An RNA of 207 nucleotides, treated with 2A3 and DMS and read out base by base.
The reactions ran in a buffer of 150 mM KOAc, 10 mM MgCl2 and 150 mM bicine (pH 8.5), at 24 C.
The 2A3 profile rests on 785 reads.
For DMS the reverse transcriptase was MarathonRT.
Reactivities are given for positions 27 through 156.
RNA sequence: GGGAACGACUCGAGUAGAGUCGAAAAUGUUGGGAUUACAGGCGUGAGCCACUGCACUUGGCCAAGUUAUUUAUUUUUAAUCUCUCUUGCCCUUCUCCCAAGGCAGGCUUAAGUUGAGACUAUUAUAGGUGUCUAAUAACCUGUGACAGAGUAAUGAUAAAUCAUUUAUGUUCGCAUAAAUGAUUUAAAAAGAAACAACAACAACAAC
Reactivity to 2A3 in 0.01 (KOAc 150mM, MgCl2 10mM, bicine 150mM(pH8.5), 24C), signal-to-noise 2, nucleotides 027 to 156: u170g010u030u030g020g010g030a050u090u020a050c020a020g020g000c040g020u050g020a040g000c030c010a040c030u090g010c020a030c070u060u070g030g040c020c000a020a040g020u070u070a110u100u120u010a150u040u130u070u020u140a070a070u040c010u010c000u000c010u050u030g010c000c030c000u000u070c090u020c010c000c000a020a010g010g000c010a010g020g020c000u200u110a080a010g050u060u020g040a010g010a030c040u030a040u250u090a060u130a190g120g000u020g010u090c030u000a000a090u060a150a090c000c000u020g000u010g020a010c030a040g130a000g060u100a150a080u060g030a040
Reactivity to DMS in 0.01 (KOAc 150mM, MgCl2 10mM, bicine 150mM(pH8.5), 24C), signal-to-noise 3, nucleotides 027 to 156: u010g020u000u000g000g000g010a180u000u000a100c060a080g000g020c020g040u010g010a140g010c030c030a060c050u010g010c060a060c060u000u010g020g040c020c030a050a180g020u000u000a030u000u010u000a080u000u010u000u020u000a030a120u000c020u000c030u000c020u000u000g020c030c010c010u000u000c020u010c030c040c050a260a120g010g020c050a040g010g010c120u000u000a040a120g020u000u010g000a090g020a110c010u000a050u000u000a110u000a060g020g010u000g000u000c060u020a080a110u000a100a050c020c010u010g040u010g020a060c040a100g010a120g020u010a070a050u010g010a300